[RMDB]
RNA sequence: GGGAACGACUCGAGUAGAGUCGAAAAUGUGAUAUUUAUGAUCUUGUUAGACUGGUAAUUACAAAGUGCCCUAGGAGGCUAGGAGGACUGACCAAGAGAGAAGGGAAAGCAUUUUGUUCUGACCAUAGGCAUGUUCACUAUUCGUAGUGAACAUGCCAAAAGAAACAACAACAACAAC
Reactivity to DMS in 0.01 (KOAc 150mM, MgCl2 10mM, bicine 150mM(pH8.5), 24C), signal-to-noise 2, nucleotides 027 to 126: u030g030u080g080a030u000a040u040u000u040a040u160g000a050u030c040u000u000g020u010u010a060g000a060c110u000g000g000u010a050a040u000u000a110c060a000a020a030g050u000g020c000c060c020u010a050g010g000a170g000g000c030u000a060g060g040a070g020g020a100c040u000g010a070c070c030a090a070g000a150g020a050g030a160a210g000g000g020a070a080a080g000c050a020u000u010u000u070g000u000u030c020u010g060a060c010c010a030u020a120
Reactivity to 2A3 in 0.01 (KOAc 150mM, MgCl2 10mM, bicine 150mM(pH8.5), 24C), signal-to-noise 1, nucleotides 027 to 126: u150g010u040g060a010u000a120u100u220u000a300u000g210a180u000c010u000u090g040u130u040a050g160a170c130u060g010g020u040a010a110u000u000a000c040a060a040a000g080u000g070c000c000c000u000a070g000g110a110g160g060c000u000a030g000g030a010g000g040a010c040u040g010a020c000c010a000a000g080a000g070a000g060a030a000g050g000g000a160a040a000g010c000a000u030u040u000u000g010u000u000c000u000g040a020c020c070a060u140a050